[RMDB]
RNA sequence: GGGAACGACUCGAGUAGAGUCGAAAACAUAAGGCAAGAAGUUCGUUAAAUAUGUGGUAUAAUCUUGAUUUUGAUGCUAAUGUAGUUCUAAAUCAUGUUUGCUCGGAAGAACAAUUAGCUGAAUUAAGAUUUAAUCACGAUUCGUCGUGAUUAAAUCAAAAGAAACAACAACAACAAC
Reactivity to 2A3 in 0.01 (KOAc 150mM, MgCl2 10mM, bicine 150mM(pH8.5), 24C), signal-to-noise 5, nucleotides 027 to 126: c030a050u100a100a040g030g010c020a030a030g060a120a050g070u010u030c020g050u100u150a070a160a120u290a120u160g040u100g030g040u050a140u040a160a040u070c040u030u030g010a030u070u050u040u080g060a040u120g040c010u030a130a100u220g050u130a100g020u010u010c010u030a050a040a020u040c020a030u100g050u080u070u040g040c030u030c040g060g030a070a030g000a010a000c000a000a030u030u040a040g010c010u030g040a030a060u090u060a100a000
Reactivity to DMS in 0.01 (KOAc 150mM, MgCl2 10mM, bicine 150mM(pH8.5), 24C), signal-to-noise 5, nucleotides 027 to 126: c050a070u000a080a180g020g020c040a040a050g000a130a100g000u010u010c050g020u010u010a050a100a100u020a080u010g030u000g000g010u010a090u010a040a030u010c040u000u000g010a020u000u010u000u010g020a070u010g020c000u000a050a080u000g020u010a070g020u010u000c010u000a040a070a100u010c050a030u000g000u000u000u010g010c080u010c070g010g010a130a060g010a010a020c010a050a230u000u000a050g020c010u000g000a040a070u000u010a040a090